[RMDB]
RNA sequence: GGGAACGACUCGAGUAGAGUCGAAAACCUCGCGCUUCUUCCUCGAUUCGGACCGGCUCAUCUCGACAAGAGGCGGCAGUCCUCAGUGCUCUUACUCUUUUCUGUAAAGAGGAGACUGCUGGACUCGCCGCCCCAGUUCGAGCAUGGGCCAGCUUCCGGGAGUAUUAUUCUUCGGAAUAAUACUCCCAAAAGAAACAACAACAACAAC
Reactivity to 2A3 in 0.01 (KOAc 150mM, MgCl2 10mM, bicine 150mM(pH8.5), 24C), signal-to-noise 2, nucleotides 027 to 156: c020c020u020c030g050c030g010c040u300u140c000u080u090c190c010u030c030g040a040u040u020c030g040g000a030c040c000g000g000c020u010c020a000u000c000u000c000g000a000c050a140a110g050a150g070g010c000g000g000c010a000g000u000c010c010u000c000a090g020u180g300c000u000c000u130u230a190c000u040c020u070u140u130u130c190u300g290u300a060a010a030g000a000g070g000a010g000a000c000u010g080c110u030g000g010a000c000u050c130g000c010c000g000c000c000c010c000a050g010u090u030c010g000a000g000c020a000u000g000g010g000c010c010a010g010c010u120u040c080c100